The data come from the RNA Mapping Database (RMDB), library OK1LIB.
An RNA of 177 nucleotides, treated with DMS and 2A3 and read out base by base.
Values cover nucleotides 27 to 126.

[RMDB]
RNA sequence: GGGAACGACUCGAGUAGAGUCGAAAAUGGCCGUGUGCAUCCCGCGUGGUGCUACGCGUGCCUCCAGCUGGCCUCUGCUGGAGAAGCCUACUGUAUAGCUCCUACUAUACAGUAGAUACACGCAAGGGAGAGGUGUUCACUUCGGUGAACAUCUUUCAAAAGAAACAACAACAACAAC
Reactivity to DMS in 0.01 (KOAc 150mM, MgCl2 10mM, bicine 150mM(pH8.5), 24C), signal-to-noise 9, nucleotides 027 to 126: u030g010g010c010c010g010u010g000u000g010c020a040u000c040c040c160g020c140g020u020g010g020u000g000c010u030a030c050g010c010g010u040g010c190c000u010c010c000a010g000c000u010g010g000c040c040u010c050u010g000c000u000g000g000a050g010a130a120g010c140c000u000a000c000u000g010u000a010u000a000g000c100u010c110c080u020a210c000u000a000u000a000c000a010g000u000a000g010a150u030a070c050a040c030g010c050a160a120g010g010
Reactivity to 2A3 in 0.01 (KOAc 150mM, MgCl2 10mM, bicine 150mM(pH8.5), 24C), signal-to-noise 9, nucleotides 027 to 126: u120g040g000c010c000g020u030g010u020g020c010a020u030c020c030c010g040c030g040u110g000g010u020g010c050u110a030c020g020c020g070u180g010c000c000u000c000c000a000g000c010u110g070g050c010c040u120c040u080g000c000u000g020g010a020g030a040a010g070c000c000u000a000c000u000g000u000a000u000a000g020c020u130c110c030u050a060c000u000a010u000a000c000a000g000u000a000g000a000u040a010c040a010c020g040c060a100a120g120g030
The DMS profile rests on 82,518 reads.